Structure probing data (DMS and 2A3) for a 207-nucleotide construct. Source: RMDB library M2RFPK, as collected in RNAgym. DMS adducts were read by reverse transcription with MarathonRT. The RNA was probed in 150 mM KOAc, 10 mM MgCl2 and 150 mM bicine (pH 8.5) at 24 C.

RNA sequence: GGGAACGACUCGAGUAGAGUCGAAAAGAACACGUCUCGGGACGACGCUAAACUCGCCCUGGUCGGGAUGGGUUUAACGACCCCUCGGGUUUCCUACUUCCUAAAACUAGGUGGUGGAGUCAUAUAAAAAACUUCUACACGUUCGCGUGUAGAAGAACAUGAUUUAUUCGUUCGCGAAUAAAUCAUGAAAAGAAACAACAACAACAAC
Reactivity to DMS in 0.01 (KOAc 150mM, MgCl2 10mM, bicine 150mM(pH8.5), 24C), signal-to-noise 2, nucleotides 027 to 156: g000a080a070c030a150c040g000u000c020u000c030g040g040g070a040c010g030a080c020g000c100u000a050a030a070c140u000c010g010c010c000c010u000g070g000u000c140g010g020g000a050u010g020g000g020u000u010u000a040a150c090g000a110c000c010c010c020u000c030g000g010g020u000u000u000c030c020u010a070c070u000u010c000c010u000a040a060a110a100c130u000a080g000g040u000g010g030u020g000g010a120g010u000c050a070u010a150u010a000a050a050a090a120a040c000u010u000c000u000a010c000a000c000g000u000u000c300g010c020g050u030g010u000a010g000a000a020g000a040a080
Reactivity to 2A3 in 0.01 (KOAc 150mM, MgCl2 10mM, bicine 150mM(pH8.5), 24C), signal-to-noise 4, nucleotides 027 to 156: g070a050a020c030a010c050g010u000c010u020c010g030g000g010a090c300g010a030c040g050c190u020a020a020a020c000u010c010g000c010c010c000u070g050g080u090c030g030g020g020a080u090g030g020g020u020u030u050a070a010c030g020a020c000c000c000c000u010c000g000g030g000u040u090u050c000c010u010a030c000u030u050c000c000u080a170a210a190a200c130u050a040g040g000u020g000g010u020g020g030a030g020u100c080a050u130a010u300a200a070a010a020a030a060c000u000u000c000u000a000c000a010c000g040u050u040c190g000c010g070u000g010u000a000g000a000a000g000a000a000